[RMDB]
About this RNA: Chemical mapping of a 207-nucleotide RNA with 2A3 and DMS. For DMS the reverse transcriptase was MarathonRT.

RNA sequence: GGGAACGACUCGAGUAGAGUCGAAAACAAUGUAUGAUUCGCAGCCCAAUCCCUCAAUAUGGGAUCAGGUUCAGAGACUAAACGGAGAUCGAUCUAGGCAUUGAACUAGGUUUAAGAUAUAGUCCAUUAUUCUGCUUAACAGCAAUUGAAUGUAUUAGAUCUCAACAAAGUUCGCUUUGUUGAGAUCAAAAGAAACAACAACAACAAC
Reactivity to 2A3 in 0.01 (KOAc 150mM, MgCl2 10mM, bicine 150mM(pH8.5), 24C), signal-to-noise 3, nucleotides 027 to 156: c040a060a090u120g040u130a070u120g120a160u130u080c050g030c080a040g040c010c060c000a000a020u000c010c000c000u060c080a170a080u100a130u300g000g000g010a000u000c050a040g030g010u010u060c060a020g060a030g000a040c040u040a060a040a020c060g100g000a050g010a060u040c030g000a000u000c010u010a000g040g000c110a220u040u250g040a140a010c010u000a000g030g050u010u040u110a030a010g020a010u050a000u050a090g070u010c000c000a000u050u040a070u170u050c050u050g130c010u070u070a100a010c010a040g130c010a010a030u090u170g060a140a040u090g000u010a040u020u020a050
Reactivity to DMS in 0.01 (KOAc 150mM, MgCl2 10mM, bicine 150mM(pH8.5), 24C), signal-to-noise 1, nucleotides 027 to 156: c040a100a070u000g020u000a110u000g000a110u000u000c020g000c050a100g040c000c010c010a130a020u000c010c000c010u010c050a140a210u000a150u000g020g030g020a020u000c010a020g000g020u000u000c050a140g010a120g000a080c020u030a000a040a140c060g010g000a080g020a080u010c030g000a010u000c020u000a050g010g010c080a280u000u000g000a110a070c010u030a080g010g000u000u000u020a070a170g020a060u000a080u020a030g010u030c030c000a050u010u000a090u020u000c030u010g050c000u000u020a030a130c080a070g010c040a040a110u000u000g020a080a060u000g000u000a070u000u000a190
Source information:
High DMS reactivity at an A or C suggests that its Watson-Crick edge is free.